[RMDB]
The data come from the RNA Mapping Database (RMDB), library TTRDES. An RNA of 177 nucleotides, treated with DMS and 2A3 and read out base by base. Reactivities are given for positions 27 through 126. The RNA was probed in 150 mM KOAc, 10 mM MgCl2 and 150 mM bicine (pH 8.5) at 24 C.
RNA sequence: GGGAACGACUCGAGUAGAGUCGAAAAGAUAUGGACGCUUACAGGACAUGCGAACAGCCUCGGAAACGAGGCGUUCGCAACAGCCUGACGAGCGUCCUAAGUCAAAACAAGGAGUUCGCUCCUUGAAGUGAUUAUAGAGCUUCGGCUCUAUAAUCACAAAAGAAACAACAACAACAAC
Reactivity to DMS in 0.01 (KOAc 150mM, MgCl2 10mM, bicine 150mM(pH8.5), 24C), signal-to-noise 2, nucleotides 027 to 126: g000a060u010a300u000g000g000a000c000g030c020u000u000a200c000a010g000g000a050c050a300u000g020c070g020a020a040c010a220g040c000c010u000c000g010g020a090a180a230c000g020a020g000g000c030g020u010u000c000g000c000a010a000c160a190g000c000c000u020g030a130c190g010a000g010c000g030u000c000c000u000a050a130g040u000c010a150a050a120a180c020a000a030g000g020a000g020u000u020c230g010c010u010c000c000u010u000g000a100a130
Reactivity to 2A3 in 0.01 (KOAc 150mM, MgCl2 10mM, bicine 150mM(pH8.5), 24C), signal-to-noise 1, nucleotides 027 to 126: g010a010u040a000u140g000g010a020c000g000c010u020u030a030c050a020g000g040a030c090a180u300g000c010g020a000a000c050a110g000c010c020u010c000g000g010a050a020a070c010g000a010g030g000c020g000u020u020c000g010c000a010a000c000a000g020c000c030u090g020a230c160g030a020g000c020g020u000c000c000u000a010a000g020u000c000a020a020a060a080c010a000a000g030g020a020g040u150u180c240g030c180u000c010c000u000u020g010a050a010